[RMDB]
RNA sequence: GGGAACGACUCGAGUAGAGUCGAAAAGAUAUGGAUCACUAAGGGAGCUGUCUAUCGGAAACGAUAGCAGCAUCGAUCUUAAGUGAUCCUAAGUCAAAACCAUGAGUAGGUUCGCCUACUCAUGGAACUAGGGGUUUAGGUUCGCCUAAACCCCUAGAAAAGAAACAACAACAACAAC
Reactivity to DMS in 0.01 (KOAc 150mM, MgCl2 10mM, bicine 150mM(pH8.5), 24C), signal-to-noise 2, nucleotides 027 to 126: g020a020u000a200u000g000g020a010u000c000a040c000u000a000a020g020g010g020a130g030c010u010g000u010c000u000a010u000c000g000g030a050a040a060c010g000a000u000a000g000c030a000g000c000a100u000c280g000a100u010c000u000u000a110a120g000u000g030a000u010c000c000u010a010a070g000u000c010a060a120a120a270c000c000a010u000g000a030g000u000a010g010g020u010u010c290g030c010c000u030a000c000u000c000a000u010g000g000a040a090
Reactivity to 2A3 in 0.01 (KOAc 150mM, MgCl2 10mM, bicine 150mM(pH8.5), 24C), signal-to-noise 2, nucleotides 027 to 126: g020a000u040a030u080g010g000a010u000c010a000c010u000a000a010g120g190g050a110g190c000u010g230u300c000u120a020u000c000g000g050a010a030a040c000g000a000u000a000g000c000a000g020c000a000u010c050g040a020u010c010u020u010a270a040g000u000g020a010u000c000c000u020a000a000g030u000c030a030a000a100a180c010c000a020u010g000a000g010u010a000g060g050u040u080c300g190c100c000u000a000c000u020c000a000u010g010g020a000a030

This 177-nucleotide RNA was probed chemically with DMS and 2A3. The reactions ran in a buffer of 150 mM KOAc, 10 mM MgCl2 and 150 mM bicine (pH 8.5), at 24 C. For 2A3, 3,284 sequencing reads were counted. 2A3 adducts were read by reverse transcription with SuperScript II with manganese. The DMS profile rests on 1,608 reads. For DMS the reverse transcriptase was MarathonRT.